[RMDB]
RNA sequence: GGGAACGACUCGAGUAGAGUCGAAAAGCGCGUAGGUUCAGAUGAUGGGCCCGCAUCUGUACGAAAGAUAGACGAAAGUCCAGCCUACGUGCAUGAGCACGCGGGCCCCGUGCUCUACGGCAAAAGACCAGCGAUAGUAUUUCGAUACUAUCGCUGGAAAAGAAACAACAACAACAAC
Reactivity to DMS in 0.01 (KOAc 150mM, MgCl2 10mM, bicine 150mM(pH8.5), 24C), signal-to-noise 2, nucleotides 027 to 126: g000c040g010c010g000u000a010g000g000u020u010c030a010g000a000u010g000a080u010g000g000g000c000c000c000g000c020a000u000c000u020g020u040a070c150g020a150a120a100g000a120u040a080g000a030c010g030a130a060a130g000u000c020c180a020g010c020c000u000a020c010g010u000g000c010a030u040g010a130g000c000a010c010g000c040g010g000g000c020c020c020c010g000u000g000c020u000c010u000a080c090g000g000c110a060a080a080a090g000a110
Reactivity to 2A3 in 0.01 (KOAc 150mM, MgCl2 10mM, bicine 150mM(pH8.5), 24C), signal-to-noise 6, nucleotides 027 to 126: g000c010g000c000g010u000a000g000g030u080u110c050a010g020a060u060g010a030u060g020g000g000c010c000c010g000c010a000u000c020u030g120u110a070c120g140a130a080a080g070a070u160a020g020a010c010g050a140a050a000g020u000c010c010a010g010c000c010u000a000c000g000u000g000c000a010u070g000a000g000c010a000c030g010c030g020g000g000c010c000c000c010g000u000g000c000u000c010u020a030c010g110g010c060a070a080a010a000g090a050